[RMDB]
RNA sequence: GGGAACGACUCGAGUAGAGUCGAAAAGAUAUGGACCUGCUACCCACCUACCUGGAGGCUUGGAUUUAACUCUCGGAAACGAGAGUUUGUCAGCCUCGCAGGUAGAGGCAGGUCCUAAGUCAAAACAUGUAGAAACAGUUCGCUGUUUCUACAUGAACAAAAGCAAAUACUUCGGUAUUUGCUUUUGAAAAGAAACAACAACAACAAC
Reactivity to DMS in 0.01 (KOAc 150mM, MgCl2 10mM, bicine 150mM(pH8.5), 24C), signal-to-noise 3, nucleotides 027 to 156: g020a100u010a170u000g010g020a030c010c000u000g030c000u010a040c020c010c030a300c130c000u000a030c020c010u000g010g010a030g000g020c000u000u000g040g020a020u000u010u000a000a020c000u000c000u000c010g000g000a180a100a230c010g020a030g010a010g000u000u000u000g010u010c010a080g010c000c010u000c000g020c010a030g010g010u000a000g000a060g020g010c000a020g010g010u000c000c010u010a000a090g010u000c040a060a090a080a170c000a000u000g010u000a010g020a030a000a020c000a010g010u000u000c300g040c030u010g000u000u000u000c000u000a000c010a010u000g010a100a180
Reactivity to 2A3 in 0.01 (KOAc 150mM, MgCl2 10mM, bicine 150mM(pH8.5), 24C), signal-to-noise 3, nucleotides 027 to 156: g070a040u190a170u190g000g000a000c000c000u000g030c010u120a300c000c010c010a010c000c010u000a000c000c000u010g000g020a000g000g000c070u170u150g170g000a050u280u280u130a000a000c000u000c000u000c010g050g060a110a070a040c020g000a000g000a000g020u000u010u030g020u010c010a010g000c000c000u000c010g000c000a000g010g000u000a000g000a000g000g010c000a000g000g000u000c000c000u020a000a000g000u010c020a000a000a060a080c000a000u010g000u010a000g020a000a000a000c010a000g030u090u140c230g050c150u000g000u000u000u000c000u000a000c000a000u000g000a000a000
This 207-nucleotide RNA was probed chemically with DMS and 2A3.
High DMS reactivity at an A or C suggests that its Watson-Crick edge is free.
It was measured as part of the RMDB library RNAMAK.
Conditions: 150 mM KOAc, 10 mM MgCl2 and 150 mM bicine (pH 8.5), 24 C.
For 2A3 the reverse transcriptase was SuperScript II with manganese.
For DMS, 7,677 sequencing reads were counted.
Reactivities are given for positions 27 through 156.